The data come from the RNA Mapping Database (RMDB), libraries RFM100 and RFMREP. An RNA of 177 nucleotides, treated with 2A3 and DMS and read out base by base. The RNA was probed in 150 mM KOAc, 10 mM MgCl2 and 150 mM bicine (pH 8.5) at 24 C. For 2A3 the reverse transcriptase was SuperScript II with manganese. Values cover nucleotides 27 to 126. For DMS the reverse transcriptase was MarathonRT.
[RMDB]
RNA sequence: GGGAACGACUCGAGUAGAGUCGAAAAUGCCUUUGAAAACAGUUCUAUGUAGUAGGGAGUCGAGAACCUAUGAGAGUUAGAACUUGCACGAAACAUUCUAUUGUCUGCAGUGUAUGUGUGGUAGGGCGGAUACAGACAAUUUCGAUUGUCUGUAUCCAAAAGAAACAACAACAACAAC
Reactivity to 2A3 in 0.01 (KOAc 150mM, MgCl2 10mM, bicine 150mM(pH8.5), 24C), signal-to-noise 8, nucleotides 027 to 126: u130g010c010c000u090u040u160g170a070a060a010a020c050a020g000u000u000c010u020a040u070g040u070a030g000u000a000g020g020g070a060g090u120c060g050a020g020a190a030c000c010u000a010u030g040a090g020a040g110u050u040a000g000a010a000c010u000u060g010c000a010c020g040a050a120a010c020a020u090u040c050u160a150u150u170g080u060c100u090g030c050a040g000u000g010u050a070u140g090u010g010u020g030g060u060a040g020g010g000c000
Reactivity to DMS in 0.01 (KOAc 150mM, MgCl2 10mM, bicine 150mM(pH8.5), 24C), signal-to-noise 8, nucleotides 027 to 126: u030g010c020c020u000u010u010g000a100a090a090a130c130a040g000u010u000c020u010a030u010g010u010a260g010u010a010g000g010g010a100g010u000c300g000a160g000a090a090c000c000u000a020u010g000a180g030a170g010u030u000a010g000a020a020c020u000u010g020c060a030c080g000a160a090a060c060a020u000u010c130u010a060u030u000g010u010c050u000g000c050a070g020u010g000u000a040u010g020u010g010u000g000g010u010a040g010g020g020c190